[RMDB]
RNA sequence: GGGAACGACUCGAGUAGAGUCGAAAAACGAGGAGGAACCGCGUGCGCAAGCGAUUCGCGGCGAAGGUCGGUGCGGCUCUCGGCGCCGCCGCGCUGUCAGUGGUGCUGGCUCCGUCGGCUUCGGCCGAUCCGGCCUACGGCUACGAGGUCGAUUACGCAACUGGGGCUUAUUCGUAAGCCCCAGUUGAAAAGAAACAACAACAACAAC
Reactivity to 2A3 in 0.01 (KOAc 150mM, MgCl2 10mM, bicine 150mM(pH8.5), 24C), signal-to-noise 1, nucleotides 027 to 156: a020c070g020a030g050g030a010g030g030a050a090c010c030g020c010g100u040g000c020g000c050a100a090g060c020g100a120u040u070c090g000c030g020g010c000g000a060a010g030g020u030c000g050g010u160g080c060g000g000c030u070c040u050c120g010g000c050g010c020c000g010c000c000g000c040g010c000u020g090u210c020a060g040u070g130g050u090g060c080u120g030g010c000u000c020c000g020u020c000g000g020c010u150u100c120g000g000c010c000g000a020u000c020c000g010g050c010c000u010a010c030g000g000c020u010a040c060g000a000g040g000u010c000g030a100u070u090a020c070g030